[RMDB]
Overview:
Conditions: 150 mM KOAc, 10 mM MgCl2 and 150 mM bicine (pH 8.5), 24 C. Structure probing data (2A3 and DMS) for a 177-nucleotide construct. Reactivities are rounded to 0.1 and cut off at 0 and 3. For DMS the reverse transcriptase was MarathonRT.

RNA sequence: GGGAACGACUCGAGUAGAGUCGAAAAUCUGAGGAGUGCGCUGCGCCGCCCAGCCCUGUCGCCCCCCGGAGGUGAUCCCUCCCUCCUGCCGGCCCGCCAGCCUGACCUGUGCUUGGCUCCGCGGGCCUAUCAGGCACACAUUCGUGUGUGCCUGAUAAAAAGAAACAACAACAACAAC
Reactivity to 2A3 in 0.01 (KOAc 150mM, MgCl2 10mM, bicine 150mM(pH8.5), 24C), signal-to-noise 2, nucleotides 027 to 126: u050c060u040g030a050g020g030a060g050u090g020c040g010c100u070g010c020g000c020c000g020c000c000c010a000g010c020c010c000u050g030u030c030g020c000c000c000c000c000c000g020g010a020g010g020u080g020a100u020c020c000c000u000c010c000c000u010c000c030u020g080c010c010g010g000c000c000c000g010c000c000a010g030c000c000u040g080a110c010c050u080g020u100g070c040u080u080g000g020c000u000c020c010g000c000g000g000g010c000c000
Reactivity to DMS in 0.01 (KOAc 150mM, MgCl2 10mM, bicine 150mM(pH8.5), 24C), signal-to-noise 2, nucleotides 027 to 126: u010c020u000g000a120g000g030a060g010u010g020c050g010c050u010g000c060g010c050c030g000c020c020c050a090g020c040c030c020u000g000u030c020g000c010c020c000c050c050c040g010g010a040g010g000u000g040a130u010c040c010c000u020c050c020c010u000c000c010u000g040c100c090g000g010c010c000c020g030c030c300a020g000c000c000u000g010a060c060c110u010g000u030g020c030u020u000g000g000c000u000c150c300g010c010g010g000g000c000c030